[RMDB]
Source information: Source: RMDB library TTRDEL, as collected in RNAgym. Chemical mapping of a 177-nucleotide RNA with DMS and 2A3. Conditions: 150 mM KOAc, 10 mM MgCl2 and 150 mM bicine (pH 8.5), 24 C.
RNA sequence: GGGAACGACUCGAGUAGAGUCGAAAAGAUAUGGAUGAAGGUACACAGCUUUGAUCUCGGAAACGAGGGAGCUGGUACUUCAUCCUAAGUCACUAGCGACUGUUCCUGUUCGCAGGAACAGUCGCAACCAAACGCUAUUGUUCGCAAUAGCGUUUGGAAAAGAAACAACAACAACAAC
Reactivity to DMS in 0.01 (KOAc 150mM, MgCl2 10mM, bicine 150mM(pH8.5), 24C), signal-to-noise 2, nucleotides 027 to 126: g000a010u000a300u010g000g020a000u010g010a030a000g020g000u000a000c010a140c010a010g010c000u000u000u030g000a070u000c010u010c000g010g010a120a080a140c010g030a020g000g000g000a010g050c010u000g000g000u000a010c000u000u000c000a020u000c000c010u000a020a050g000u000c060a200c160u000a090g020c000g020a020c000u000g000u000u000c000c010u010g000u000u020c190g050c020a000g000g000a000a010c000a000g010u000c010g000c000a000a060
Reactivity to 2A3 in 0.01 (KOAc 150mM, MgCl2 10mM, bicine 150mM(pH8.5), 24C), signal-to-noise 3, nucleotides 027 to 126: g020a010u090a040u170g000g000a010u020g010a030a040g260g110u140a020c300a010c000a090g000c020u250u300u100g090a110u090c000u000c020g030g030a110a060a060c030g000a010g000g000g000a000g010c010u000g000g000u000a010c000u000u000c010a000u000c000c000u000a070a020g020u010c000a010c250u140a060g010c030g000a000c010u000g000u010u010c000c010u000g040u080u100c300g000c030a000g040g000a000a000c000a010g010u000c000g010c000a000a000